This 177-nucleotide RNA was probed chemically with DMS and 2A3.
For DMS the reverse transcriptase was MarathonRT.
The reactions ran in a buffer of 150 mM KOAc, 10 mM MgCl2 and 150 mM bicine (pH 8.5), at 24 C.
For 2A3 the reverse transcriptase was SuperScript II with manganese.
RNA sequence: GGGAACGACUCGAGUAGAGUCGAAAAGAAGGCACUUUCGAGUGCCUUCAUGGCGAGCUCAGGUCUCCCUCCCUUGCAAACUCCCUAAGGGAGGAGACCUAAUUAGGUGCACUUUCGAGUGCACCAAGUUAUUACGCGGUUUCGACCGCGUAAUAACAAAAGAAACAACAACAACAAC
Reactivity to DMS in 0.01 (KOAc 150mM, MgCl2 10mM, bicine 150mM(pH8.5), 24C), signal-to-noise 2, nucleotides 027 to 126: g000a020a000g000g010c010a020c000u000u000u000c170g030a040g040u000g010c000c000u000u010c000a040u010g020g000c120g010a080g020c140u000c110a050g000g000u000c000u000c100c040c030u000c000c000c000u000u000g000c190a070a070a200c150u010c020c010c030u000a030a020g010g010g000a010g000g000a020g000a020c000c010u000a010a020u010u010a090g010g020u000g000c000a010c000u000u010u010c140g000a020g020u000g000c000a000c010c000a010a020
Reactivity to 2A3 in 0.01 (KOAc 150mM, MgCl2 10mM, bicine 150mM(pH8.5), 24C), signal-to-noise 3, nucleotides 027 to 126: g000a010a010g000g010c020a010c010u040u100u220c260g100a010g020u000g000c000c000u010u000c000a000u010g030g050c060g050a100g040c040u080c200a030g000g010u020c010u020c050c020c000u010c020c000c000u000u010g040c090a110a080a300c060u090c010c000c000u050a010a010g000g000g000a000g000g010a000g000a000c010c000u000a010a030u090u140a060g000g000u000g000c000a000c000u070u060u050c270g090a000g000u020g000c000a000c000c000a000a000